[RMDB]
RNA sequence: GGGAACGACUCGAGUAGAGUCGAAAACGUGAUACCCACGGCGGGGACAAGAUCUUCUACUACGGCGGCGGCGGACAGGGCAAUCACCUCGGCGGCGCCUACAGCGGCGCCUUUCUGAAGGCACUGGCAUGAAUGGAAAUUUCGAUUUCCAUUCAUGAAAAGAAACAACAACAACAAC
Reactivity to DMS in 0.01 (KOAc 150mM, MgCl2 10mM, bicine 150mM(pH8.5), 24C), signal-to-noise 6, nucleotides 027 to 126: c090g010u010g010a110u020a090c040c020c010a180c070g000g000c030g000g000g010g010a080c070a100a090g010a090u030c050u010u010c060u000a080c090u020a090c070g000g010c040g010g000c050g000g020c050g010g000a080c110a070g000g000g000c060a100a070u020c050a080c030c030u010c040g010g020c230g010g010c010g040c050c030u000a060c180a140g010c150g020g000c020g000c020c020u000u000u000c050u010g000a070a070g000g010c070a070c030u010g000g000
Reactivity to 2A3 in 0.01 (KOAc 150mM, MgCl2 10mM, bicine 150mM(pH8.5), 24C), signal-to-noise 7, nucleotides 027 to 126: c030g030u050g050a070u160a190c020c010c020a010c020g030g010c020g010g020g020g020a020c050a070a050g020a080u030c030u090u040c010u090a120c020u040a040c060g050g000c020g010g000c000g010g000c010g020g020a040c030a040g020g010g000c010a020a050u100c020a040c010c010u020c000g040g000c010g010g000c010g010c010c000u130a100c050a050g020c050g050g000c010g000c000c000u020u060u000c030u060g050a030a010g020g000c020a010c060u030g030g010
Source: RMDB library OK1LIB, as collected in RNAgym. This 177-nucleotide RNA was probed chemically with DMS and 2A3. The DMS profile rests on 12,576 reads. 2A3 adducts were read by reverse transcription with SuperScript II with manganese. Values cover nucleotides 27 to 126.